[RMDB]
RNA sequence: GGGAACGACUCGAGUAGAGUCGAAAACCGCCGCGGCGGGGCUGAGGUGGCCUGCGGGGGCAACCCCAUGACCCACGCGCUCGAUGAAGAGCUUGCCAUCGGGGUUGAGCAUGAUCUCGACCACUGUAUAAUCGAGGCCAUUCGUGGCCUCGAUUAUAAAAGAAACAACAACAACAAC
Reactivity to 2A3 in 0.01 (KOAc 150mM, MgCl2 10mM, bicine 150mM(pH8.5), 24C), signal-to-noise 1, nucleotides 027 to 126: c010c000g060c010c020g090c090g040g000c000g000g000g030g000c060u040g040a060g020g030u040g000g000c000c010u000g060c050g000g300g000g000g000c010a030a070c040c000c030c000a020u130g140a300c010c000c000a040c000g010c020g000c010u010c000g090a150u270g060a120a260g000a010g050c050u060u150g060c010c000a060u010c000g000g000g000g060u000u010g000a000g000c130a180u300g000a080u080c010u000c030g020a030c020c070a130c140u090g000u040